[RMDB]
RNA sequence: GGGAACGACUCGAGUAGAGUCGAAAAACGGGGUAGCGUUAUGAAGGGGAUCACUAAUACUCCGAAUAGCGUCAGCCGAAUACAGACGGUUGGGGUUAUAAGCUCGGUGAAGUCGUGCGAAGCACACAUAGGGAAGUGAAUUCGUUCACUUCCCUAUAAAAGAAACAACAACAACAAC
Reactivity to 2A3 in 0.01 (KOAc 150mM, MgCl2 10mM, bicine 150mM(pH8.5), 24C), signal-to-noise 4, nucleotides 027 to 126: a000c030g000g000g010g050u080a020g030c040g000u070u080a090u130g110a060a050g020g030g040g020a040u080c030a020c060u100a050a130u090a100c010u000c000c010g000a000a010u040a020g020c080g300u020c010a000g000c010c000g000a010a020u140a130c040a020g140a020c000g000g000u000u010g000g010g000g020u040u000a050u010a150a020g020c030u010c020g030g030u090g130a080a010g030u060c050g000u020g030c030g070a070a030g030c100a010c000a000c000
Reactivity to DMS in 0.01 (KOAc 150mM, MgCl2 10mM, bicine 150mM(pH8.5), 24C), signal-to-noise 9, nucleotides 027 to 126: a090c050g010g010g000g000u070a070g000c040g010u010u020a050u010g000a180a090g010g010g010g000a090u010c150a100c140u030a060a090u030a110c040u000c010c010g000a130a050u010a010g000c010g000u000c010a300g000c010c000g020a080a070u030a120c230a110g010a120c040g000g000u010u000g020g010g000g010u000u010a030u010a060a120g010c070u010c030g000g000u010g010a080a060g000u000c120g010u000g000c030g010a090a120g000c040a040c070a040c130
This 177-nucleotide RNA was probed chemically with 2A3 and DMS. Reactivities are given for positions 27 through 126. Conditions: 150 mM KOAc, 10 mM MgCl2 and 150 mM bicine (pH 8.5), 24 C. The data come from the RNA Mapping Database (RMDB), libraries RFM100 and RFMREP.